[RMDB]
RNA sequence: GGGAACGACUCGAGUAGAGUCGAAAAGUACGUGCUCACAUGCGGAUGAUUACAUCUGAUGUAAUCGCAUGUGUUAUAAGAACGACCUAAGCGAAGUGAGGACAGUGAUUGAGCACGAGAAUCAUGGACAUGCUUGCUUAUUCGUAAGCAAGCAUGUAAAAGAAACAACAACAACAAC
Reactivity to 2A3 in 0.01 (KOAc 150mM, MgCl2 10mM, bicine 150mM(pH8.5), 24C), signal-to-noise 2, nucleotides 027 to 126: g080u060a020c010g000u010g000c020u030c020a000c000a010u000g000c000g080g190a140u100g020a000u020u000a000c000a000u020c120u210g060a090u010g000u000a000a000u000c000g000c000a000u030g030u000g010u010u000a180u000a010a000g030a000a000c010g030a030c000c000u030a020a000g000c010g010a080a030g030u010g060a010g020g020a050c040a000g000u000g040a050u050u050g020a010g000c020a000c000g000a010g030a000a030u050c030a010u030g070g040
Reactivity to DMS in 0.01 (KOAc 150mM, MgCl2 10mM, bicine 150mM(pH8.5), 24C), signal-to-noise 6, nucleotides 027 to 126: g010u010a060c010g030u000g010c020u000c000a020c010a000u010g000c020g010g010a100u050g020a050u000u000a000c000a040u010c170u020g020a070u010g020u000a000a000u000c010g000c000a000u010g010u000g010u010u030a060u030a070a100g000a120a050c040g010a180c020c010u000a070a130g000c000g000a090a120g010u010g000a100g000g010a100c160a140g000u010g000a090u020u010g000a060g000c000a000c000g000a150g000a140a060u000c050a050u010g000g010